[RMDB]
RNA sequence: GGGAACGACUCGAGUAGAGUCGAAAAGUUUACCUCACUGUACCUCAGUUUCCUCUUCUAAAUGAGUCAAUGAGAGUACAUACUUCAUAGGGUUGUUGUAACCUUGAGGUGAAACAAUCUUUGUGAGCAUGUGGCAUAGUGCCUGACACAGAGUAAGCUGAUCAGUCGUAUUCGUACGACUGAUCAGAAAAGAAACAACAACAACAAC
Reactivity to DMS in 0.01 (KOAc 150mM, MgCl2 10mM, bicine 150mM(pH8.5), 24C), signal-to-noise 2, nucleotides 027 to 156: g020u000u000u000a040c010c020u000c010a140c300u000g000u010a010c030c010u000c000a090g020u010u000u000c070c020u000c020u010u000c140u000a120a080a120u000g000a050g030u000c050a050a110u030g000a050g000a180g030u000a020c030a100u010a100c070u000u000c080a090u010a090g020g000g040u000u020g000u000u000g010u000a000a050c030c010u000u000g000a070g040g020u000g030a120a040a110c070a040a090u020c010u020u000u010g020u020g020a100g060c060a090u010g070u010g010g030c040a180u000a090g020u000g020c020c010u030g010a300c020a070c020a090g000a050g020u000a090a160g000
Reactivity to 2A3 in 0.01 (KOAc 150mM, MgCl2 10mM, bicine 150mM(pH8.5), 24C), signal-to-noise 4, nucleotides 027 to 156: g010u020u030u060a050c010c020u030c020a070c040u010g000u000a010c010c000u020c020a120g010u050u110u060c050c000u040c010u190u100c100u230a170a190a150u280g000a000g040u040c040a030a050u050g000a000g020a030g000u010a000c000a010u090a040c030u060u140c080a090u180a130g040g000g010u000u050g020u000u010g020u080a010a010c000c000u030u080g030a030g020g000u070g050a010a030a000c020a060a050u020c000u020u020u010g030u030g060a220g100c040a100u150g030u140g220g000c040a040u120a250g230u220g080c000c010u000g010a010c000a000c010a000g000a000g040u060a030a050g080

Structure probing data (DMS and 2A3) for a 207-nucleotide construct. For 2A3, 2,070 sequencing reads were counted. High 2A3 reactivity points to a flexible backbone, as in loops and unpaired stretches. The reactions ran in a buffer of 150 mM KOAc, 10 mM MgCl2 and 150 mM bicine (pH 8.5), at 24 C.